[RMDB]
Background
This 177-nucleotide RNA was probed chemically with DMS and 2A3. High DMS reactivity at an A or C suggests that its Watson-Crick edge is free. The RNA was probed in 150 mM KOAc, 10 mM MgCl2 and 150 mM bicine (pH 8.5) at 24 C. It was measured as part of the RMDB library TTRDES. For DMS, 5,602 sequencing reads were counted.
RNA sequence: GGGAACGACUCGAGUAGAGUCGAAAAGAUAUGGACAUACGAGCUCGAUAAGAAUCAUGUCGGAAACGACAUAUUCUUUUGACGAGCGAGUAUGUCCUAAGUCAAAAUCGCGCGUUCGCGCGCGAAACUAAACUGUACACUUCGGUGUACAGUUUAGAAAAGAAACAACAACAACAAC
Reactivity to DMS in 0.01 (KOAc 150mM, MgCl2 10mM, bicine 150mM(pH8.5), 24C), signal-to-noise 5, nucleotides 027 to 126: g000a040u000a300u010g000g000a030c000a010u010a000c000g010a300g000c000u000c000g050a190u000a010a020g000a050a000u000c300a010u000g000u010c010g010g010a100a090a210c000g020a010c000a010u000a020u000u000c000u010u000u000u020g020a180c210g000a010g020c000g000a220g000u000a000u000g020u010c000c000u000a000a060g000u000c030a100a050a100a130u000c000g000c010g030c010g020u000u020c210g020c010g030c000g020c020g000a020a100a250
Reactivity to 2A3 in 0.01 (KOAc 150mM, MgCl2 10mM, bicine 150mM(pH8.5), 24C), signal-to-noise 4, nucleotides 027 to 126: g020a000u070a040u130g010g000a010c000a000u000a000c010g000a010g000c000u000c030g170a120u070a300a010g010a000a000u090c160a020u160g000u000c000g000g000a040a070a040c010g000a000c000a000u000a000u020u000c010u020u090u080u120g300a190c160g000a000g010c020g000a000g000u000a000u000g000u000c000c000u010a010a000g010u000c010a000a010a000a300u070c010g000c000g000c000g020u080u060c300g020c010g000c020g000c000g230a020a000a000